[RMDB]
The record gives the reactivity of an RNA of 177 nucleotides to DMS and 2A3. Reactivities are given for positions 27 through 126. The data come from the RNA Mapping Database (RMDB), library OK1LIB. The 2A3 profile rests on 1,767 reads. For 2A3 the reverse transcriptase was SuperScript II with manganese.
RNA sequence: GGGAACGACUCGAGUAGAGUCGAAAAGUGGAAAUGUAUGUGGGUGCGGCGUACACGGUAAUGACAGGGUCUCAUCUCAGUAUGAACAUAAAUAGCAGACCAGGCCACUACCACAGGGCCAAAGGCGACUCUUAGGUACCUUCGGGUACCUAAGAGUAAAAGAAACAACAACAACAAC
Reactivity to DMS in 0.01 (KOAc 150mM, MgCl2 10mM, bicine 150mM(pH8.5), 24C), signal-to-noise 3, nucleotides 027 to 126: g090u000g000g000a050a040a090u000g030u010a020u000g000u030g000g010g030u030g010c130g000g010c020g070u030a020c100a070c100g020g020u050a060a020u050g000a050c040a070g000g000g010u010c040u010c010a050u000c080u020c090a060g020u010a070u020g000a040a100c160a070u020a090a060a080u060a130g000c120a120g020a100c060c010a080g000g000c010c000a030c040u020a070c050c070a080c110a090g000g000g000c000c000a050a070a060g020g010c020g000
Reactivity to 2A3 in 0.01 (KOAc 150mM, MgCl2 10mM, bicine 150mM(pH8.5), 24C), signal-to-noise 3, nucleotides 027 to 126: g040u070g020g110a120a030a050u190g050u140a050u090g040u070g010g020g000u080g010c060g050g000c010g030u090a040c040a010c090g020g030u100a070a010u120g050a040c020a030g110g000g070u020c000u010c050a090u010c040u020c010a100g040u170a040u180g010a040a080c020a040u210a100a260a060u160a020g030c040a010g020a030c010c000a000g010g000c000c010a130c040u080a060c000c000a010c010a050g020g060g000c000c000a030a110a000g100g000c020g030